[RMDB]
RNA sequence: GGGAACGACUCGAGUAGAGUCGAAAACUCUGACGCUUCGGCGUCAGAGAAACCUCUAAGCAGAUUGGCGAGGACGACGCUGCGGAGCGCGUUUGCGAACAAAAACGCAUAGAUUCGUCUAUGCGAAUCUCAAAGCUUGUUUCGACAAGCUUUGAGAAAAAGAAACAACAACAACAAC
Reactivity to DMS in 0.01 (KOAc 150mM, MgCl2 10mM, bicine 150mM(pH8.5), 24C), signal-to-noise 1, nucleotides 027 to 126: c010u000c010u010g030a010c000g030c020u000u010c270g030g000c000g010u000c010a010g000a010g000a040a060a090c050c020u000c120u010a120a150g010c080a050g010a180u000u000g010g010c000g000a140g000g010a180c000g010a050c020g020c020u000g030c170g000g000a060g000c030g010c010g000u000u000u020g020c010g020a080a090c130a020a120a040a120a170c020g040c000a040u000a000g000a030u040u000c230g010u000c000u000a010u000g020c000g000a040a020
Chemical mapping of a 177-nucleotide RNA with DMS. The RNA was probed in 150 mM KOAc, 10 mM MgCl2 and 150 mM bicine (pH 8.5) at 24 C. DMS adducts were read by reverse transcription with MarathonRT. Reactivities are given for positions 27 through 126.